[RMDB]
RNA sequence: GGGAACGACUCGAGUAGAGUCGAAAACUGUCCUGUGUGGAAGUACGUGAGUACUUCACGCUCUACGGGAGUAGAGCCACACAGAUCCUGGAGCGAUGUCUUGGAACUACUCCCGUAGUUCACGUAUGACUCACGUCAUACCAAGACGACAGCCAGGCCUACUGCCGUAGUUCGCUACGGCAGUAGGAAAAGAAACAACAACAACAAC
Reactivity to 2A3 in 0.01 (KOAc 150mM, MgCl2 10mM, bicine 150mM(pH8.5), 24C), signal-to-noise 1, nucleotides 027 to 156: c000u010g000u030c000c000u010g000u000g000u010g040g020a060a050g010u100a020c010g020u010g030a000g010u060a280c020u100u080c060a040c060g060c020u000c000u000a010c000g010g000g000a030g000u000a000g000a010g010c000c010a010c000a000c000a010g000a020u040c010c000u050g090g050a090g060c150g030a020u030g000u010c010u000u000g020g020a070a070c000u000a000c020u020c020c040c010g000u000a000g010u050u090c130a080c090g090u110a050u090g020a000c000u020c040a020c040g000u020c000a010u010a060c010c000a000a010g000a000c000g000a010c000a000g010c000c000a030g010g020
This 207-nucleotide RNA was probed chemically with 2A3. Source: RMDB library OK3TST, as collected in RNAgym. The 2A3 profile rests on 2,936 reads. The reactions ran in a buffer of 150 mM KOAc, 10 mM MgCl2 and 150 mM bicine (pH 8.5), at 24 C. For 2A3 the reverse transcriptase was SuperScript II with manganese.